[RMDB]
This 177-nucleotide RNA was probed chemically with DMS and 2A3. The reactions ran in a buffer of 150 mM KOAc, 10 mM MgCl2 and 150 mM bicine (pH 8.5), at 24 C. For 2A3, 21,673 sequencing reads were counted. 2A3 is a SHAPE reagent: it acylates the 2'-hydroxyl of flexible nucleotides of all four kinds. It was measured as part of the RMDB library OK1LIB.

RNA sequence: GGGAACGACUCGAGUAGAGUCGAAAAGGUUCAUUUCGGGAUGCAACUAUUUGCUCGCGCUGACGGUUUGAGCAACUUUUGGUUUCCGUCAUAUUUUCCAUGUUAUCUACUGAUGUCUUGGUCGGGCCACGAAAAUAUAGUUCGCUAUAUUUUCGUGAAAAGAAACAACAACAACAAC
Reactivity to DMS in 0.01 (KOAc 150mM, MgCl2 10mM, bicine 150mM(pH8.5), 24C), signal-to-noise 7, nucleotides 027 to 126: g000g010u000u010c080a040u000u000u000c030g000g000g010a060u010g000c060a040a090c150u010a070u020u020u010g000c010u000c020g000c100g020c070u010g000a100c120g020g000u010u000u010g000a030g000c050a040a040c140u010u010u010u010g010g000u000u000u010c010c010g010u010c040a040u020a070u010u010u010u000c030c020a080u010g020u010u010a070u010c040u010a070c070u010g000a080u010g010u020c040u010u010g020g010u000c020g010g000g010c140
Reactivity to 2A3 in 0.01 (KOAc 150mM, MgCl2 10mM, bicine 150mM(pH8.5), 24C), signal-to-noise 9, nucleotides 027 to 126: g070g000u070u060c030a040u060u060u120c050g020g030g030a030u070g100c020a050a020c040u080a100u130u060u050g010c010u020c020g020c010g010c070u090g070a070c070g060g070u030u090u170g030a030g010c010a030a050c030u090u090u080u110g080g010u030u050u030c010c000g020u020c030a020u050a070u140u080u040u020c030c020a040u090g080u120u100a130u090c050u060a080c050u060g080a100u050g090u040c020u100u070g040g020u040c020g010g010g010c010